[RMDB]
RNA sequence: GGGAACGACUCGAGUAGAGUCGAAAAUCGACAUGGUUUCGUCCGAUCGUCGGAAGAUCUGCGGGAAAGGGACGACGGCGAACGGCGUUCGCCGCGCGUCGGCGCCGACACCUUAUGACGGGAUGCACGCUAAAAUUUUAUUCGUAAAAUUUUAGCGAAAAGAAACAACAACAACAAC
Reactivity to 2A3 in 0.01 (KOAc 150mM, MgCl2 10mM, bicine 150mM(pH8.5), 24C), signal-to-noise 5, nucleotides 027 to 126: u060c010g050a020c060a130u130g080g020u040u080u100c040g010u000c020c040g060a190u140c020g050u000c020g040g020a040a000g020a120u020c050u060g000c040g030g050g110a120a220a150g140g040g000a010c010g010a010c010g000g020c030g020a040a030c050g260g080c140g020u080u070c070g000c040c010g050c030g000c000g010u020c000g020g030c020g020c000c000g010a020c010a060c030c000u080u100a070u150g030a020c030g000g000g010a020u070g050c090a020
Reactivity to DMS in 0.01 (KOAc 150mM, MgCl2 10mM, bicine 150mM(pH8.5), 24C), signal-to-noise 5, nucleotides 027 to 126: u000c040g000a120c130a120u000g010g020u000u010u000c040g010u000c020c040g000a120u000c060g020u000c050g010g000a080a060g000a070u000c050u010g010c060g010g010g000a070a090a130g010g010g020a030c010g000a050c010g000g010c010g010a020a020c010g010g010c150g000u000u000c050g010c000c010g010c130g000c010g020u000c020g010g010c070g010c010c020g000a090c110a070c070c020u000u000a110u010g000a040c050g010g010g010a070u010g010c130a180